[RMDB]
RNA sequence: GGGAACGACUCGAGUAGAGUCGAAAAGAUAUGGAGCGUGUGCGACAUGCUCUAGAGCUAAUACCCCAUACUCGGAAACGAGUAUGGGGGAUAACCGUAGAGCAACAGCGCACCCGCUCCUAAGUCACUAUAUACCGAAGUUCGCUUCGGUAUAUAGAAAAGAAACAACAACAACAAC
Reactivity to 2A3 in 0.01 (KOAc 150mM, MgCl2 10mM, bicine 150mM(pH8.5), 24C), signal-to-noise 2, nucleotides 027 to 126: g010a010u060a030u200g000g000a010g020c000g020u020g000u010g010c010g060a180c200a160u130g000c000u000c000u000a070g040a040g040c070u140a080a070u210a300c000c010c000c000a000u000a010c000u000c000g010g020a060a100a050c010g010a010g000u010a000u000g000g010g000g000g000a000u070a030a060c060c040g230u020a000g000a000g010c010a030a200c080a160g060c000g000c010a000c020c010c000g000c000u000c000c000u000a020a000g000u010c000a000
Reactivity to DMS in 0.01 (KOAc 150mM, MgCl2 10mM, bicine 150mM(pH8.5), 24C), signal-to-noise 5, nucleotides 027 to 126: g010a060u010a300u010g000g000a000g020c000g010u000g010u000g010c010g000a070c100a280u010g000c000u010c000u000a040g000a040g010c010u000a190a090u010a220c000c000c000c000a010u000a010c010u000c000g010g000a110a120a240c010g010a020g000u000a000u000g000g000g010g000g000a010u000a060a090c080c020g010u000a010g000a030g010c020a020a100c300a160g000c010g000c010a010c000c060c000g000c000u000c000c000u000a000a070g000u000c040a300